[RMDB]
Notes: An RNA of 207 nucleotides, treated with 2A3 and read out base by base. It was measured as part of the RMDB library RNAMAK. The reactions ran in a buffer of 150 mM KOAc, 10 mM MgCl2 and 150 mM bicine (pH 8.5), at 24 C. For 2A3 the reverse transcriptase was SuperScript II with manganese.
RNA sequence: GGGAACGACUCGAGUAGAGUCGAAAACUCAUGAUUCGUCAUGAGGACAACACCUUUGUGGUGAGUCGCACGAUAAGACGCUCGUCCCAUUGGGACGAGACCCGUCUUUUGACGUGCACUCACCACUCUGGUAUUCGCACGGCCUUCGGGCCGUGAAUUCGGUAGACAGCUUCGGCUGUCUACCGAAAAAAGAAACAACAACAACAAC
Reactivity to 2A3 in 0.01 (KOAc 150mM, MgCl2 10mM, bicine 150mM(pH8.5), 24C), signal-to-noise 1, nucleotides 027 to 156: c010u000c000a000u000g020a010u080u190c270g000u000c180a000u000g020a000g010g010a010c050a100a020c010a050c010c000u010u020u000g030u000g000g000u030g000a000g010u090c140g000c020a000c010g030a010u000a060a000g000a000c000g000c020u000c020g020u000c000c000c030a210u160u300g010g000g010a000c000g000a010g010a030c040c040c010g000u010c010u030u060u020u050g230a100c010g000u010g020c000a000c000u000c000a000c000c000a000c010u000c020u010g000g030u030a090u090u300c110g000c050a000c010g010g000c010c000u150u150c210g040g010g000c000c080g020u080g000a000a220